[RMDB]
RNA sequence: GGGAACGACUCGAGUAGAGUCGAAAAGUCAAGAACCAUCAGUGUGCUGUAUUCAGGAAACCCAUCUCACGUGCAGAGACACACAUAGGCUCAAAAUAAAGGGAUGGAGGAAGAUCUACCAAGCAAAAAUUAGGCCAGCAUUCGUGCUGGCCUAAUUAAAAGAAACAACAACAACAAC
Reactivity to 2A3 in 0.01 (KOAc 150mM, MgCl2 10mM, bicine 150mM(pH8.5), 24C), signal-to-noise 1, nucleotides 027 to 126: g150u120c000a000a060g000a080a030c050c000a030u090c150a000g030u000g000u000g260c030u000g000u030a070u040u160c000a020g040g000a030a070a000c000c000c000a060u000c000u000c000a070c000g020u020g030c040a020g030a060g120a170c030a000c000a000c010a080u090a100g080g060c010u030c080a050a030a000a090u290a090a240a090g130g040g000a030u000g060g050a000g010g000a050a050g010a080u000c040u010a020c000c000a050a050g020c080a030a090a180
Reactivity to DMS in 0.01 (KOAc 150mM, MgCl2 10mM, bicine 150mM(pH8.5), 24C), signal-to-noise 1, nucleotides 027 to 126: g040u000c150a040a040g010a100a140c000c000a000u030c030a100g000u000g000u000g080c140u000g000u030a240u040u000c100a110g000g000a250a000a040c140c070c000a080u010c010u000c030a200c280g000u000g000c160a080g000a010g000a280c010a070c020a000c190a010u040a000g000g000c080u000c150a040a090a010a160u040a070a060a100g000g000g000a120u000g000g000a030g000g000a110a000g000a000u000c000u000a080c000c000a140a030g040c260a040a000a060
Conditions: 150 mM KOAc, 10 mM MgCl2 and 150 mM bicine (pH 8.5), 24 C. Structure probing data (2A3 and DMS) for a 177-nucleotide construct. The 2A3 profile rests on 453 reads.